[RMDB]
RNA sequence: GGGAACGACUCGAGUAGAGUCGAAAAAACAAGGUUUUCCGAUGGUCCUUCUCGCCCACAGGGUUCGAGUCGCACGGAAGCCUGAGCAGACCAAAGGGAGAUGAUUCCUUGGGAUAUGCUAGUGCCCAAGCACUGCUUGAGCGCGACGCCGCCAAACCCUAAAUCAAAACUUCGGUUUUGAUUUAGGAAAAGAAACAACAACAACAAC
Reactivity to DMS in 0.01 (KOAc 150mM, MgCl2 10mM, bicine 150mM(pH8.5), 24C), signal-to-noise 2, nucleotides 027 to 156: a030a060c030a070a050g000g020u000u010u020u000c010c050g040a230u000g010g030u000c040c010u000u000c010u000c020g070c040c010c000a100c100a090g030g010g010u010u000c030g030a070g020u010c040g040c010a140c000g020g000a090a070g020c000c000u000g020a050g050c090a060g010a210c010c010a040a050a070g000g000g000a040g030a200u000g020a300u000u000c030c000u000u000g010g000g000a110u000a040u010g040c060u020a070g040u010g000c000c010c050a040a020g020c020a180c120u030g000c000u000u000g010a020g010c010g000c010g040a040c070g000c020c040g000c000c020a060a120a160c130
Reactivity to 2A3 in 0.01 (KOAc 150mM, MgCl2 10mM, bicine 150mM(pH8.5), 24C), signal-to-noise 3, nucleotides 027 to 156: a010a000c140a090a020g020g010u300u100u070u010c030c040g050a300u060g030g010u070c040c000u010u010c010u000c010g020c000c000c030a300c150a230g000g020g000u160u200c010g010a000g030u020c010g010c060a010c000g000g000a010a000g000c000c000u000g010a020g000c010a010g010a030c010c000a050a110a020g000g030g010a030g020a070u270g030a080u070u030c010c000u010u010g070g000g040a180u140a040u180g000c000u010a020g010u010g030c000c010c000a000a010g020c080a050c300u230g000c000u010u020g000a020g000c010g000c010g030a030c070g050c050c020g030c020c030a060a040a120c000
Chemical mapping of a 207-nucleotide RNA with DMS and 2A3. DMS adducts were read by reverse transcription with MarathonRT. The reactions ran in a buffer of 150 mM KOAc, 10 mM MgCl2 and 150 mM bicine (pH 8.5), at 24 C. Source: RMDB library RSTRND, as collected in RNAgym. For 2A3, 2,246 sequencing reads were counted. Values cover nucleotides 27 to 156.